Conditions: 150 mM KOAc, 10 mM MgCl2 and 150 mM bicine (pH 8.5), 24 C. An RNA of 207 nucleotides, treated with DMS and 2A3 and read out base by base. The 2A3 profile rests on 1,165 reads. The DMS profile rests on 2,367 reads. 2A3 adducts were read by reverse transcription with SuperScript II with manganese.
RNA sequence: GGGAACGACUCGAGUAGAGUCGAAAAGUGGUGCGCGGAGAGGGUAACCACCGGCGCGCGUCACUGAUAUAUCCACCGGGGGGUAAGGGGAGAAAAGGAUACAGCACGACGAAGUUAGCACGCUGCCGAAAUGUACCCACAUUCGUGUGGGUACAAAGUCGAUAGUCAUAUUCGUAUGACUAUCGACAAAAGAAACAACAACAACAAC
Reactivity to DMS in 0.01 (KOAc 150mM, MgCl2 10mM, bicine 150mM(pH8.5), 24C), signal-to-noise 1, nucleotides 027 to 156: g030u000g010g000u000g020c040g000c010g010g000a150g000a100g000g000g050u000a190a100c070c080a070c010c010g000g000c020g020c010g030c010g040u000c010a050c020u000g020a090u010a110u000a090u000c030c050a090c000c040g020g000g000g000g000g020u000a040a020g010g000g060g000a090g010a030a040a100a030g000g020a090u000a030c020a080g010c050a090c010g000a080c000g000a030a130g020u020u000a070g050c060a080c030g030c010u020g020c040c000g000a070a060a160u000g000u000a040c000c020c000a040c000a050u000u010c300g010u000g050u000g000g060g010u010a020c000a010a040a120
Reactivity to 2A3 in 0.01 (KOAc 150mM, MgCl2 10mM, bicine 150mM(pH8.5), 24C), signal-to-noise 2, nucleotides 027 to 156: g020u010g020g000u000g010c000g010c010g020g090a150g050a080g100g100g000u130a090a100c050c010a010c020c040g060g030c000g000c000g010c000g040u000c000a010c000u000g000a000u020a010u010a040u080c020c060a080c130c050g000g000g010g000g020g030u000a070a000g000g010g000g000a030g010a000a040a070a060g000g000a030u010a130c010a020g030c060a020c030g080a000c050g020a100a010g030u040u070a030g060c020a040c130g040c010u020g030c010c000g050a050a050a020u050g000u000a000c000c020c010a000c000a020u060u080c170g050u000g000u010g020g000g040u000a000c000a000a000a000